[RMDB]
RNA sequence: GGGAACGACUCGAGUAGAGUCGAAAAGAUAUGGAAUCUGAGGACUUUUGACGGCUAACUAUCGGAAACGAUAGAGGCCGAUAAGUCCCAGAUUCCUAAGUCAAAGCGUCGGGUUCGCCCGACGCAAUCAUUCGUUUUACUUCGGUAAAACGAAUGAAAAAGAAACAACAACAACAAC
Reactivity to DMS in 0.01 (KOAc 150mM, MgCl2 10mM, bicine 150mM(pH8.5), 24C), signal-to-noise 1, nucleotides 027 to 126: g000a010u000a300u000g000g000a020a000u020c010u000g000a200g050g000a020c000u000u010u030u020g020a260c100g000g020c000u000a110a210c000u000a010u010c000g020g000a140a060a190c020g000a000u000a020g030a300g010g000c000c000g030a090u000a000a020g000u010c000c000c000a020g000a010u000u000c000c000u000a000a060g000u000c010a050a150a130g000c030g000u000c000g040g010g040u020u000c300g020c000c000c000g040a000c020g030c020a050a020
Reactivity to 2A3 in 0.01 (KOAc 150mM, MgCl2 10mM, bicine 150mM(pH8.5), 24C), signal-to-noise 1, nucleotides 027 to 126: g030a020u100a060u140g010g000a020a000u030c010u020g030a300g140g020a020c010u040u090u220u300g300a300c060g020g000c040u100a160a090c000u010a300u020c000g120g010a150a030a020c050g010a000u000a020g080a100g000g020c030c010g020a010u020a050a000g010u000c000c000c000a000g010a000u000u050c000c010u000a000a000g020u000c000a080a110a060g000c010g000u000c000g000g030g110u100u180c300g130c050c010c040g000a000c000g000c000a010a000
Chemical mapping of a 177-nucleotide RNA with DMS and 2A3. Conditions: 150 mM KOAc, 10 mM MgCl2 and 150 mM bicine (pH 8.5), 24 C. The DMS profile rests on 1,002 reads. Values cover nucleotides 27 to 126. For DMS the reverse transcriptase was MarathonRT.